[RMDB]
RNA sequence: GGGAACGACUCGAGUAGAGUCGAAAACGUGAAACUAGAUUGACCAAGAAGGAAAGGGAGAGCGAGGGCCCACGGAGCAGGCAGCAUAAGUGCAUGUGGGCCUGCCGUCGCCCGCCACCCUCGGCCGCGCUGAUCACUUGUUCGCAAGUGAUCAGCGAAAAGAAACAACAACAACAAC
Reactivity to 2A3 in 0.01 (KOAc 150mM, MgCl2 10mM, bicine 150mM(pH8.5), 24C), signal-to-noise 2, nucleotides 027 to 126: c040g060u030g070a000a080a100c160u030a080g070a270u010u110g050a040c060c080a080a050g150a020a050g080g000a100a030a000g060g000g000a150g030a030g030c010g010a160g050g020g000c020c110c000a020c010g080g020a040g080c010a000g070g000c000a100g010c050a060u030a300a220g140u170g220c020a010u040g000u080g000g140g020c000c000u000g000c000c000g000u020c030g020c020c000c000g000c010c020a040c020c000c000u010c000g120g000c000c010g000
Reactivity to DMS in 0.01 (KOAc 150mM, MgCl2 10mM, bicine 150mM(pH8.5), 24C), signal-to-noise 2, nucleotides 027 to 126: c030g010u010g030a030a050a030c020u010a070g000a150u000u050g000a120c030c000a120a070g000a070a190g000g100a130a010a130g020g000g000a020g000a160g020c040g010a190g000g000g040c000c050c100a090c140g010g010a100g010c030a040g000g030c020a300g000c050a020u000a060a070g070u030g000c120a120u020g000u030g000g050g000c000c000u020g000c010c050g000u010c220g000c090c050c000g050c090c080a070c030c000c040u000c100g020g020c080c070g000
Background:
Structure probing data (2A3 and DMS) for a 177-nucleotide construct. For DMS the reverse transcriptase was MarathonRT.